[RMDB]
RNA sequence: GGGAACGACUCGAGUAGAGUCGAAAAAGCGGCCCUUUCGAGGGCCGCUGAUGGAAAGCCAGCCGAAAGCCAUUUUAUUCCUUGGCUGGCGAAAGCCUAAAAUUCACGCUGCUUUCGAGCAGCGUAAACUAUUAAUCUACUUCGGUAGAUUAAUAGUAAAAGAAACAACAACAACAAC
Reactivity to 2A3 in 0.01 (KOAc 150mM, MgCl2 10mM, bicine 150mM(pH8.5), 24C), signal-to-noise 1, nucleotides 027 to 126: a000g030c020g000g070c020c010c090u020u020u010c110g030a000g000g030g040c000c000g010c000u000g030a010u030g000g020a110a000a000g000c000c000a020g050c020c010g100a090a040a010g000c020c040a080u030u110u150u250a160u180u100c000c020u010u050g010g000c000u000g030g000c000g000a000a010a000g050c000c000u050a090a100a070a040u080u110c040a000c000g010c000u000g030c000u000u070u140c230g060a000g000c000a020g000c000g000u000a000a000
Reactivity to DMS in 0.01 (KOAc 150mM, MgCl2 10mM, bicine 150mM(pH8.5), 24C), signal-to-noise 3, nucleotides 027 to 126: a020g010c010g050g020c000c010c020u000u010u010c140g010a020g010g050g040c010c000g000c000u000g000a050u010g010g010a140a080a300g000c020c000a010g010c010c010g010a060a090a100g020c090c070a080u000u010u010u010a110u020u000c060c030u000u000g010g010c000u000g010g000c000g000a020a040a090g020c030c020u000a060a050a100a120u020u000c120a020c020g010c010u000g000c000u000u010u020c130g000a030g000c000a000g000c000g000u000a000a030